[RMDB]
RNA sequence: GGGAACGACUCGAGUAGAGUCGAAAAUGGGAUCAGAUAAAAAUGAUGACAUCCCCCGUGACUACUGUAGUUACAGGAUUAGCUGCUUCUAUGGGGUCAGUAUUAAGUUUAUGUGCAGCUCCAGGACAAAACGCUUGUGUUUCGACACAAGCGUUUUAAAAGAAACAACAACAACAAC
Reactivity to DMS in 0.01 (KOAc 150mM, MgCl2 10mM, bicine 150mM(pH8.5), 24C), signal-to-noise 1, nucleotides 027 to 126: u000g010g000g010a050u000c020a020g000a150u020a050a060a190a140a130u000g000a020u000g010a170c020a060u010c040c010c000c030c120g050u000g000a020c020u000a090c110u000g030u000a010g000u010u000a090c070a070g000g010a120u010u000a130g010c040u000g000c020u010u000c070u010a000u000g000g000g000g020u010c030a040g010u020a060u010u020a050a090g010u020u010u000a070u010g010u000g010c020a020g000c040u010c040c090a180g010g000a170c210